[RMDB]
RNA sequence: GGGAACGACUCGAGUAGAGUCGAAAAACGACACAAGAUUCGCCUUCCCUGCAUUCGACAUCAGCGAAAGGUGGCGCAAGGAGGACAACAAAAGGAUUUAUCAGUACAUCGUAGACGAAGCCAAUCCCCUUGAAGCUCAGUUCGCUGAGCUUCAAGGAAAAGAAACAACAACAACAAC
Reactivity to DMS in 0.01 (KOAc 150mM, MgCl2 10mM, bicine 150mM(pH8.5), 24C), signal-to-noise 1, nucleotides 027 to 126: a070c010g020a080c080a090c120a090a110g000a200u030u010c030g010c030c030u010u000c030c040c040u000g000c170a150u030u000c050g000a080c080a020u000c100a040g000c030g000a100a000a060g010g010u000g000g000c000g040c040a010a020g010g020a090g000g000a060c120a030a060c180a000a080a030a140g000g000a070u000u000u000a060u030c010a110g040u000a010c100a050u000c080g000u000a020g000a080c130g000a040a010g020c050c040a050a110u000c010c000
Reactivity to 2A3 in 0.01 (KOAc 150mM, MgCl2 10mM, bicine 150mM(pH8.5), 24C), signal-to-noise 1, nucleotides 027 to 126: a000c020g020a020c030a000c020a050a110g010a270u020u020c030g030c020c000u040u010c010c050c040u010g060c040a060u050u110c020g050a060c020a050u060c050a020g090c020g140a130a040a020g100g000u040g060g030c000g000c060a000a070g050g040a050g010g020a050c020a110a000c010a000a230a040a040g120g000a020u080u080u060a100u100c060a060g080u080a050c020a050u100c100g090u080a010g000a040c030g020a080a000g020c030c010a040a040u060c000c010